An RNA of 177 nucleotides, treated with DMS and 2A3 and read out base by base. 2A3 adducts were read by reverse transcription with SuperScript II with manganese.

[RMDB]
RNA sequence: GGGAACGACUCGAGUAGAGUCGAAAAAAUGUUCUGUUCGCAGAACAUUAAGGUGGUGUCCCGACCAGGCUGGAUGUCAGUACACGAAGUGCCAGAUCGGGAAUGCCUCCGGCUUCGGCCGGAGGAAUCGAAGGAUUUGAUUCGUCAAAUCCUUCGAAAAAGAAACAACAACAACAAC
Reactivity to DMS in 0.01 (KOAc 150mM, MgCl2 10mM, bicine 150mM(pH8.5), 24C), signal-to-noise 4, nucleotides 027 to 126: a030a000u000g000u000u000c000u000g010u010u020c190g010c010a010g010a000a000c000a000u000u000a100a120g020g010u010g010g010u000g000u000c000c010c000g000a010c010c010a070g010g000c010u000g030g010a160u000g000u000c100a100g020u020a110c100a050c040g000a150a130g000u010g000c030c000a060g010a020u000c010g010g000g010a040a040u000g010c000c000u000c000c000g010g010c020u000u010c220g040g010c000c000g000g020a010g010g010a020a030
Reactivity to 2A3 in 0.01 (KOAc 150mM, MgCl2 10mM, bicine 150mM(pH8.5), 24C), signal-to-noise 3, nucleotides 027 to 126: a030a000u020g010u010u010c000u000g020u020u040c230g000c050a000g000a000a000c000a000u010u010a040a050g140g010u080g030g020u060g040u030c000c000c000g000a000c010c010a030g070g000c000u030g000g080a260u110g050u170c080a130g130u230a070c040a010c100g090a160a010g070u030g170c010c000a010g020a130u020c010g020g030g010a020a020u070g020c000c000u010c010c000g000g020c010u030u060c270g110g000c020c010g010g020a000g000g010a000a020